[RMDB]
RNA sequence: GGGAACGACUCGAGUAGAGUCGAAAAUACCGCAGGCCUGCGGUGCGGCAGUGUGGAGACCUGCCGUAAGCCGUGUUGUUUUGACAACCGGGAGAAAGCGUAUGCGGAGGCAGGGCUUUCAGGGUCUAAAAGUAUGGGAUCUUCGGAUCCCAUACAACUGAAUAUUCUUCUUCGGAAGAAUAUUCAGAAAAGAAACAACAACAACAAC
Reactivity to DMS in 0.01 (KOAc 150mM, MgCl2 10mM, bicine 150mM(pH8.5), 24C), signal-to-noise 1, nucleotides 027 to 156: u000a140c000c000g000c080a090g030g000c040c020u010g030c050g020g020u000g000c040g020g000c020a040g000u040g020u020g020g020a210g010a150c250c000u000g030c010c000g000u010a000a080g020c000c010g010u000g020u010u000g000u000u010u010u010g010a060c010a030a020c010c010g000g000g000a140g020a050a030a070g000c010g040u000a190u000g020c000g020g020a170g030g000c030a060g030g020g000c010u000u010u000c010a070g000g000g000u000c010u000a050a100a120a160g010u000a020u000g000g050g000a010u000c000u000u020c300g030g000a030u000c000c000c020a000u000a030c000a030a090
Reactivity to 2A3 in 0.01 (KOAc 150mM, MgCl2 10mM, bicine 150mM(pH8.5), 24C), signal-to-noise 4, nucleotides 027 to 156: u090a000c000c000g000c000a010g000g020c000c030u020g000c000g020g000u000g000c000g010g000c000a010g010u040g010u100g300g090a060g040a080c000c000u000g000c000c000g000u000a010a020g040c000c010g130u140g020u150u000g020u010u140u130u300g120a020c010a010a010c000c000g010g000g010a010g000a000a000a000g000c010g020u130a040u050g000c020g020g060a060g260g020c020a020g020g030g000c000u000u000u000c010a000g000g000g000u010c010u030a050a060a030a050g000u000a000u000g000g000g010a010u010c010u030u050c160g070g000a000u000c010c000c000a000u000a000c000a000a000